[RMDB]
This 177-nucleotide RNA was probed chemically with 2A3 and DMS. Reactivities are given for positions 27 through 126.
RNA sequence: GGGAACGACUCGAGUAGAGUCGAAAAUGCUUGAAUCCAGGAGGCAGAGGUUGCAGUGAACCGAGAUUGCGCCACGACACUCCAGCCUGGGCGACAGAGCCGCAGUUCGUGGUGAAAGGUAGGCCCAGACACCCAUAAACUUCGGUUUAUGGGUGUCAAAAGAAACAACAACAACAAC
Reactivity to 2A3 in 0.01 (KOAc 150mM, MgCl2 10mM, bicine 150mM(pH8.5), 24C), signal-to-noise 1, nucleotides 027 to 126: u080g020c000u030u050g040a050a030u060c030c010a030g040g070a030g010g010c060a030g000a020g100g030u160u180g030c000a000g020u010g100a040a050c050c010g050a040g030a100u030u170g050c030g040c020c010a000c020g040a020c040a010c040u000c020c020a010g000c000c030u030g010g020g040c010g040a050c020a040g000a030g060c010c050g010c010a020g000u120u100c060g020u050g020g000u000g050a090a000a010g060g020u060a020g000g110c030c020c000a000
Reactivity to DMS in 0.01 (KOAc 150mM, MgCl2 10mM, bicine 150mM(pH8.5), 24C), signal-to-noise 3, nucleotides 027 to 126: u000g010c020u000u010g010a090a090u010c050c060a140g000g010a080g030g020c070a060g000a070g030g010u000u000g020c060a050g020u010g010a070a050c090c030g020a110g020a130u000u010g010c040g000c010c040a040c030g010a090c120a080c010u000c130c020a100g010c020c000u010g010g000g030c110g000a100c020a080g000a200g000c040c050g030c240a070g000u010u000c030g030u000g010g010u000g000a090a030a090g000g010u000a090g030g010c050c010c010a130
The RNA was probed in 150 mM KOAc, 10 mM MgCl2 and 150 mM bicine (pH 8.5) at 24 C.
The DMS profile rests on 1,966 reads.
It was measured as part of the RMDB library OK2TST.